An RNA of 207 nucleotides, treated with 2A3 and read out base by base. The reactions ran in a buffer of 150 mM KOAc, 10 mM MgCl2 and 150 mM bicine (pH 8.5), at 24 C. 2A3 adducts were read by reverse transcription with SuperScript II with manganese.

[RMDB]
RNA sequence: GGGAACGACUCGAGUAGAGUCGAAAAGAAAGAAAGAAGCGAGAUGGCGCAGCCGCACGGGCAACCGUCAAUCCAGCACUUCACAAGUCUUGUCGUUCUGACAGGACAUCCAUCAACCCACCGGGAAAAAAGGACUACAGCUUCGGCUGUAGUCCAAUCACUAACAAGGGUUCGCCCUUGUUAGUGAAAAAGAAACAACAACAACAAC
Reactivity to 2A3 in 0.01 (KOAc 150mM, MgCl2 10mM, bicine 150mM(pH8.5), 24C), signal-to-noise 1, nucleotides 027 to 156: g010a030a000a000g030a000a100a000g050a060a020g030c050g000a030g000a120u050g020g000c020g010c000a000g000c010c030g090c130a100c150g110g000g000c040a050a070c030c000g010u010c000a000a120u000c020c010a010g030c010a050c060u070u030c060a060c070a270a000g010u000c000u000u000g000u000c000g090u200u300c230u270g020a010c000a000g000g000a000c000a010u000c000c010a010u030c030a050a120c000c020c040a020c090c150g080g000g010a000a180a000a000a000a000g060g000a000c000u030a000c000a020g020c010u000u100c170g120g000c000u000g030u000a010g000u000c000c000a000a000